[RMDB]
RNA sequence: GGGAACGACUCGAGUAGAGUCGAAAACCUCAAGAGUUCGCUCUUGAGGAAAAUACCGCCCGAAAAGCUUGCUGACCGGGCGGAAUAAUAAAACAGCAAGCAAAACGGAAAGGUUCGCCUUUCCGAACAGAUAAGAUGUGUUCGCACAUCUUAUCUGAAAAGAAACAACAACAACAAC
Reactivity to 2A3 in 0.01 (KOAc 150mM, MgCl2 10mM, bicine 150mM(pH8.5), 24C), signal-to-noise 3, nucleotides 027 to 126: c000c000u000c000a000a000g010a010g020u050u110c160g030c060u010c000u010u000g010a000g010g010a100a000a000a000u040a010c000c000g000c000c000c000g010a040a040a000a050g000c010u000u010g000c010u030g040a050c030c000g000g000g000c020g000g010a000a010u050a010a000u030a010a070a010a030c050a010g000c000a010a000g000c010a020a020a010a040c010g000g000a010a000a010g030g000u060u090c180g110c030c000u000u000u000c000c000g000a030a010
Reactivity to DMS in 0.01 (KOAc 150mM, MgCl2 10mM, bicine 150mM(pH8.5), 24C), signal-to-noise 3, nucleotides 027 to 126: c000c000u000c000a000a000g010a010g020u010u010c250g020c000u010c000u000u000g000a020g010g000a000a000a060a070u000a070c010c010g000c000c010c000g010a090a080a180a130g000c010u010u000g000c010u000g000a300c190c030g000g010g000c000g000g000a020a010u010a060a060u010a050a050a100a070c120a090g000c000a000a000g030c010a160a060a080a200c000g020g000a010a000a000g010g020u000u010c290g010c000c010u000u000u000c000c000g020a050a040
Chemical mapping of a 177-nucleotide RNA with 2A3 and DMS. In probing experiments dimethyl sulfate is read out at A N1 and C N3, which are open when not base-paired. Conditions: 150 mM KOAc, 10 mM MgCl2 and 150 mM bicine (pH 8.5), 24 C. The data come from the RNA Mapping Database (RMDB), library M2PK50. Reactivities are given for positions 27 through 126. 2A3 adducts were read by reverse transcription with SuperScript II with manganese. For DMS the reverse transcriptase was MarathonRT.